[RMDB]
RNA sequence: GGGAACGACUCGAGUAGAGUCGAAAAGGCCAAGUCCCUUUACCGGAGGGCUAUACCUACUACAUAUUGAAGUUUGCAGAAGGGGACGAUUUUCCGUUCACGCAAAUGGAAAUGGUAUAUUAUGAGAGACAAGCAUUUAAUUCGUUAAAUGCUUGUCAAAAGAAACAACAACAACAAC
Reactivity to DMS in 0.01 (KOAc 150mM, MgCl2 10mM, bicine 150mM(pH8.5), 24C), signal-to-noise 6, nucleotides 027 to 126: g020g020c090c050a040a060g010u040c010c010c010u000u010u030a110c120c130g020g000a030g010g010g000c040u000a050u000a070c000c010u000a050c210u020a090c120a110u010a050u020u000g000a300a150g000u000u010u000g010c010a140g000a050a060g000g000g020g000a020c300g010a130u020u030u020u010c030c000g020u000u000c010a110c120g000c040a020a000a010u000g000g010a150a010a020u020g000g000u010a040u020a050u000u010a080u040g010a150g020a250
Reactivity to 2A3 in 0.01 (KOAc 150mM, MgCl2 10mM, bicine 150mM(pH8.5), 24C), signal-to-noise 9, nucleotides 027 to 126: g090g020c050c020a020a010g130u140c030c000c000u050u060u050a160c050c030g050g030a010g010g000g020c010u020a020u020a030c000c020u030a080c040u050a060c080a160u260a080u080u090g020a030a010g030u020u000u010g020c050a050g060a190a050g110g050g010g010a010c050g030a050u210u050u090u080c060c030g050u000u010c030a040c140g000c010a000a010a010u040g010g030a020a060a020u070g000g050u020a030u010a020u160u160a170u180g150a120g010a010

The data come from the RNA Mapping Database (RMDB), library OK1LIB. The record gives the reactivity of an RNA of 177 nucleotides to DMS and 2A3. In probing experiments dimethyl sulfate is read out at A N1 and C N3, which are open when not base-paired. 2A3 adducts were read by reverse transcription with SuperScript II with manganese. The DMS profile rests on 11,701 reads.